Chemical mapping of a 177-nucleotide RNA with DMS. For DMS, 2,095 sequencing reads were counted.
[RMDB]
RNA sequence: GGGAACGACUCGAGUAGAGUCGAAAAGAUAUGGAUGUCGUCUCAUGCCUUGGACCAGUAUUUCUAUCUGUCGGAAACGACAGAUAGAAAUACUGCUAGGCAUACGCGAGACGAGCAUCCUAAGUCACCUAUAAUUGCGGUUCGCCGCAAUUAUAGGAAAAGAAACAACAACAACAAC
Reactivity to DMS in 0.01 (KOAc 150mM, MgCl2 10mM, bicine 150mM(pH8.5), 24C), signal-to-noise 3, nucleotides 027 to 126: g000a090u010a300u010g000g000a010u000g060u000c010g010u000c000u000c020a080u000g000c000c000u020u020g040g000a140c300c020a040g010u010a000u000u000u000c010u000a000u020c030u000g010u000c000g020g000a130a090a190c020g010a010c010a000g000a020u000a000g020a010a010a000u000a000c000u000g010c010u000a010g010g020c000a060u000a020c300g040c300g010a000g000a000c000g010a090g020c010a000u010c000c010u010a040a110g000u000c030a250